[RMDB]
RNA sequence: GGGAACGACUCGAGUAGAGUCGAAAAUGCGAUAAACGGCACCUAUAAGGUGGUGCCGAACCAGCGUGAGCUACCAACACGCAACGAGCAGUCUGGUAUGACUGCAAACCUAUGGUAAACAAAAGAACUAAUCCACACAGUUCGCUGUGUGGAUUAGAAAAGAAACAACAACAACAAC
Reactivity to DMS in 0.01 (KOAc 150mM, MgCl2 10mM, bicine 150mM(pH8.5), 24C), signal-to-noise 3, nucleotides 027 to 126: u020g000c160g030a100u030a030a100a240c020g020g000c000a000c000c000u010a150u030a160a130g030g030u000g010g020u000g010c000c010g010a050a060c110c090a050g010c010g020u000g010a090g020c020u020a030c000c000a100a140c000a030c010g020c010a120a090c210g000a130g000c000a000g020u010c000u000g030g070u020a060u000g000a010c000u000g020c000a030a080a030c080c010u000a050u010g010g000u000a020a070a070c150a030a030a120a050g000a080a060
Reactivity to 2A3 in 0.01 (KOAc 150mM, MgCl2 10mM, bicine 150mM(pH8.5), 24C), signal-to-noise 2, nucleotides 027 to 126: u060g000c030g070a110u160a040a170a000c000g000g000c000a000c010c010u090a110u050a270a070g170g100u110g010g000u000g010c020c000g000a020a000c000c000a000g000c000g000u020g010a010g000c040u030a030c000c000a030a000c000a000c000g000c020a040a050c050g030a050g010c000a000g030u000c000u130g130g090u210a080u160g000a000c020u000g010c000a000a010a020c030c010u080a090u060g020g000u050a120a080a000c100a040a090a020a010g070a060a030